Chemical mapping of a 207-nucleotide RNA with 2A3.
It was measured as part of the RMDB library OK3TST.
RNA sequence: GGGAACGACUCGAGUAGAGUCGAAAAGAUUAAGUGGGAGCGUCGCCCUAUCGGUGCAUCGGAUAUUAAUUAGCCAGUGCGUGGCAAUACGCAUAUUGAUGUCUACUUUGGCGUAGACUAUGCCAAUUUAAGGAUUGAUGGGCAAUCCAGCCCUAGAGAUAGGCUCGCUGUUCGCAGCGAGCCUAUCAAAAGAAACAACAACAACAAC
Reactivity to 2A3 in 0.01 (KOAc 150mM, MgCl2 10mM, bicine 150mM(pH8.5), 24C), signal-to-noise 1, nucleotides 027 to 156: g010a020u150u100a000a090g060u100g050g010g000a060g060c100g010u010c060g060c000c000c000u030a110u300c030g000g110u080g000c000a020u010c060g080g060a030u060a050u110u070a210a180u030u060a000g050c030c040a040g000u030g010c040g000u020g020g000c070a040a010u140a040c010g020c020a000u050a040u050u140g050a040u060g000u000c000u000a010c010u050u190u100g040g030c000g010u010a010g070a010c030u050a070u090g140c090c000a000a010u070u070u210a160a080g040g000a060u040u030g010a000u050g000g000g000c050a030a040u020c000c000a010g000c000c000c000u040a040g030a000
The RNA was probed in 150 mM KOAc, 10 mM MgCl2 and 150 mM bicine (pH 8.5) at 24 C. For 2A3, 579 sequencing reads were counted.